[RMDB]
RNA sequence: GGGAACGACUCGAGUAGAGUCGAAAAGAUAUGGAUCGAGUGGAGGCUGUGUAUCGGAAACGAUACACAAGCCGAUGAAACUCGAGUCCUAAGUCAAAACACUUUACCUGUUCGCAGGUAAAGUGAAGAUGAGAAUUAGGUUCGCCUAAUUCUCAUCAAAAGAAACAACAACAACAAC
Reactivity to DMS in 0.01 (KOAc 150mM, MgCl2 10mM, bicine 150mM(pH8.5), 24C), signal-to-noise 6, nucleotides 027 to 126: g000a010u000a000u000g000g000a300u000c000g010a020g000u000g000g000a010g030g030c010u000g010u000g000u000a010u000c000g010g010a010a000a020c000g010a010u000a000c000a000c000a010a020g040c010c000g000a070u010g000a120a200a020c000u000c000g010a020g010u010c000c000u000a000a090g000u000c010a090a060a130a210c000a000c000u000u000u000a010c000c000u000g010u000u010c220g010c000a000g000g000u000a000a000a000g020u000g000a040a090
Reactivity to 2A3 in 0.01 (KOAc 150mM, MgCl2 10mM, bicine 150mM(pH8.5), 24C), signal-to-noise 4, nucleotides 027 to 126: g010a000u010a010u040g000g000a010u010c000g000a000g010u010g010g020a000g000g000c010u010g000u000g000u010a000u010c000g000g000a000a000a000c000g010a000u000a000c000a000c010a010a000g000c020c010g010a030u000g010a000a000a000c000u000c000g000a010g070u060c010c000u010a000a000g000u000c000a030a030a060a080c010a000c000u010u000u000a000c000c000u020g050u070u100c300g020c090a000g000g000u010a010a000a000g000u010g010a020a040
Background
The record gives the reactivity of an RNA of 177 nucleotides to DMS and 2A3. Reactivities are given for positions 27 through 126. 2A3 adducts were read by reverse transcription with SuperScript II with manganese. The DMS profile rests on 14,794 reads. The RNA was probed in 150 mM KOAc, 10 mM MgCl2 and 150 mM bicine (pH 8.5) at 24 C.